[RMDB]
RNA sequence: GGGAACGACUCGAGUAGAGUCGAAAAAAGAGGUGAAGGUGAUCCGCCUGGAUGCCCCCAUCCGCGACCUGGUGAAACUGGCCCACGAAUUUCCCAGUUCCACCACCGAUGCCAGCAGCGGGCAGGGGAUUUAUAUUAUGUUCGCAUAAUAUAAAUCAAAAGAAACAACAACAACAAC
Reactivity to DMS in 0.01 (KOAc 150mM, MgCl2 10mM, bicine 150mM(pH8.5), 24C), signal-to-noise 9, nucleotides 027 to 126: a080a070g000a090g010g010u000g000a090a070g010g020u000g010a080u000c060c050g010c050c050u000g010g000a090u000g000c050c010c010c030c040a160u000c020c030g010c030g010a110c210c070u000g000g010u000g010a030a020a030c030u010g000g010c110c050c050a090c160g020a080a120u000u010u000c110c010c000a070g000u000u000c010c010a030c030c020a050c080c060g000a100u000g010c030c030a070g010c080a120g010c040g000g000g020c100a070g000g000g010
Reactivity to 2A3 in 0.01 (KOAc 150mM, MgCl2 10mM, bicine 150mM(pH8.5), 24C), signal-to-noise 3, nucleotides 027 to 126: a010a000g080a040g000g030u050g050a120a020g040g030u050g020a100u020c020c020g030c030c040u060g030g030a050u130g020c000c000c000c010c020a020u050c020c000g040c020g030a060c010c040u030g000g000u010g010a020a020a010c020u020g020g000c010c030c010a080c070g060a060a080u040u050u090c010c010c000a000g000u010u000c000c010a010c010c000a010c020c040g020a020u090g020c000c020a010g010c000a000g030c040g010g010g000c020a020g030g020g030